[RMDB]
Chemical mapping of a 170-nucleotide RNA with DMS and 2A3. The DMS profile rests on 23,655 reads.
RNA sequence: GGGAACGACUCGAGUAGAGUCGAAAAAUCUGGUCCGUUCGGGCCCUCUUCGCCGGGGGAGCCCCCUCUCCAUCCUUGUCUUUCUUUCCGAGAAUUCCUUUGAUGUUCCCUAGCCAGGGAUUGUCUUCACCCCACUUCUUCGGAAGUGGGAAAAGAAACAACAACAACAAC
Reactivity to DMS in 0.01 (KOAc 150mM, MgCl2 10mM, bicine 150mM(pH8.5), 24C), signal-to-noise 6, nucleotides 027 to 129: a130u000c050u040g090g000u030c020c030g050u060u030c120g020g040g030c020c060c030u020c020u040u030c140g050c080c040g020g010g050g030g020a100g030c030c020c040c050c010u020c030u000c000c040a120u050c000c000u060u000g000u030c050u020u030u010c040u020u020u040c020c050g000a130g080a150a110u020u020c020c030u020u000u050g030a010u020g030u030u010c050c000c000u000a150g030c060c060a090g020g020g030a100u000u000g020u010c000u010u030c090a120c110
Reactivity to 2A3 in 0.01 (KOAc 150mM, MgCl2 10mM, bicine 150mM(pH8.5), 24C), signal-to-noise 6, nucleotides 027 to 129: a000u020c040u040g000g010u000c000c010g050u090u110c090g010g020g010c010c030c000u030c030u070u090c030g040c030c000g000g000g000g010g000a040g010c010c010c000c000c020u020c000u020c010c020a070u070c020c010u050u050g050u040c000u020u060u030c010u000u040u000c000c010g030a010g020a060a070u060u060c020c000u110u090u170g090a080u130g060u030u030c000c000c000u010a030g050c010c030a020g040g000g000a020u020u060g030u010c010u010u020c030a090c010

Description
Values cover nucleotides 27 to 129. For DMS the reverse transcriptase was MarathonRT. The reactions ran in a buffer of 150 mM KOAc, 10 mM MgCl2 and 150 mM bicine (pH 8.5), at 24 C.